[RMDB]
Structure probing data (2A3 and DMS) for a 207-nucleotide construct. The 2A3 profile rests on 2,572 reads. For DMS, 2,895 sequencing reads were counted. DMS adducts were read by reverse transcription with MarathonRT. It was measured as part of the RMDB library OK3TST.
RNA sequence: GGGAACGACUCGAGUAGAGUCGAAAACAUUUUGCAUAUCCUGCUUUGAACCUACCGCCAAAAGUGAUGAGUUGUAUAAUGGAUACGUUAAUAAUUACUAGAGGAAAAGAACUAAAAGGUGAAACAUGUGAUACCGACGUGGAAGGCGGUAAACCCAAUACAACGUGUGUUUCGACACACGUUGUAUAAAAGAAACAACAACAACAAC
Reactivity to 2A3 in 0.01 (KOAc 150mM, MgCl2 10mM, bicine 150mM(pH8.5), 24C), signal-to-noise 3, nucleotides 027 to 156: c030a020u090u090u030u260g000c020a020u040a070u210c020c040u040g050c070u100u030u130g030a020a020c010c020u050a040c000c060g050c020c030a060a070a010a030g040u060g040a090u040g070a090g060u080u030g060u090a130u050a130a120u100g080g010a060u040a020c000g010u000u060a130a010u080a070a050u160u060a040c060u040a020g020a030g090g000a060a060a030a060g050a030a020c040u070a080a120a030a050g050g000u020g040a110a020a000c040a020u050g060u030g030a000u020a050c000c010g010a010c010g040u020g020g020a040a010g030g000c000g000g010u020a010a000a010c000c000c000a000
Reactivity to DMS in 0.01 (KOAc 150mM, MgCl2 10mM, bicine 150mM(pH8.5), 24C), signal-to-noise 2, nucleotides 027 to 156: c060a160u000u000u000u000g030c070a100u000a140u000c030c020u020g020c070u000u000u010g000a060a090c060c010u000a050c020c010g040c000c030a070a110a120a190g090u000g010a040u000g010a130g030u010u010g030u000a070u000a070a050u000g000g020a100u000a010c040g010u010u000a040a120u000a070a080u010u000a100c090u020a110g020a190g000g000a110a020a080a090g000a070a150c070u000a050a050a060a080g030g020u000g000a100a050a020c060a020u010g050u010g000a110u000a060c050c050g010a050c060g040u000g020g010a070a180g000g020c030g000g010u000a010a050a100c030c010c020a120